Structure probing data (2A3) for a 177-nucleotide construct. Values cover nucleotides 27 to 126. Reactivities are rounded to 0.1 and cut off at 0 and 3. The reactions ran in a buffer of 150 mM KOAc, 10 mM MgCl2 and 150 mM bicine (pH 8.5), at 24 C.
[RMDB]
RNA sequence: GGGAACGACUCGAGUAGAGUCGAAAAUUUCUACCAAAGGGAAGCGCUGGUGUUCAACUCGACUCAGGACCGUCAGGCAAAAAUCGUCGAGCUGUUGCGUAGCGAGCAGUUUCUGCCUAUCGGCAAGGACGCACCUACGAUUCGUCGUAGGUGCGUCAAAAGAAACAACAACAACAAC
Reactivity to 2A3 in 0.01 (KOAc 150mM, MgCl2 10mM, bicine 150mM(pH8.5), 24C), signal-to-noise 1, nucleotides 027 to 126: u020u000u030c000u170a140c000c100a090a000a090g130g000g000a140a090g120c020g000c030u060g000g180u130g040u180u090c000a000a090c000u040c030g050a010c000u000c130a130g000g040a100c000c000g050u160c030a020g000g000c000a040a040a040a040a040u080c060g060u000c000g000a000g000c010u000g030u150u030g090c120g000u000a020g000c000g100a000g080c020a020g000u020u000u150c150u000g000c000c000u250a290u130c020g020g000c000a000a000g190